The record gives the reactivity of an RNA of 177 nucleotides to DMS and 2A3. For DMS the reverse transcriptase was MarathonRT. Source: RMDB library OK2TRN, as collected in RNAgym. Values cover nucleotides 27 to 126. For DMS, 852 sequencing reads were counted. The reactions ran in a buffer of 150 mM KOAc, 10 mM MgCl2 and 150 mM bicine (pH 8.5), at 24 C.
RNA sequence: GGGAACGACUCGAGUAGAGUCGAAAAUCGCGGCCUUUUGGCUGACCGAAAUAGAUGCCGCCGGUCAGUUCGCGCACACACAGGAUGUCGAAGCCGUUUGCGGCAAUGUCUGCACGCAGCGGACAGAUAGCGAGGUAUUUUUCGAAAUACCUCGCUAAAAAGAAACAACAACAACAAC
Reactivity to DMS in 0.01 (KOAc 150mM, MgCl2 10mM, bicine 150mM(pH8.5), 24C), signal-to-noise 2, nucleotides 027 to 126: u000c050g010c010g000g000c010c090u000u010u010u010g000g000c010u010g050a010c050c020g010a070a060a120u020a160g010a120u020g000c000c030g010c040c060g010g010u000c020a020g000u000u000c090g010c060g040c110a040c050a040c150a120c180a250g010g020a250u000g030u000c030g020a080a170g000c020c010g010u000u000u010g000c000g020g040c030a070a040u000g020u000c020u000g010c010a110c140g020c240a130g000c000g020g030a010c020a040g010a130
Reactivity to 2A3 in 0.01 (KOAc 150mM, MgCl2 10mM, bicine 150mM(pH8.5), 24C), signal-to-noise 1, nucleotides 027 to 126: u040c090g020c000g030g030c020c040u080u160u260u300g100g000c000u010g000a020c020c000g070a050a050a000u160a030g150a110u130g030c000c010g000c000c000g030g000u020c060a060g000u020u160c060g000c000g000c010a030c020a000c000a010c060a150g010g160a150u060g010u080c000g010a030a010g010c070c000g020u010u110u230g020c000g000g010c000a040a000u020g010u010c000u000g020c010a030c300g290c090a060g010c000g000g000a040c020a010g160a060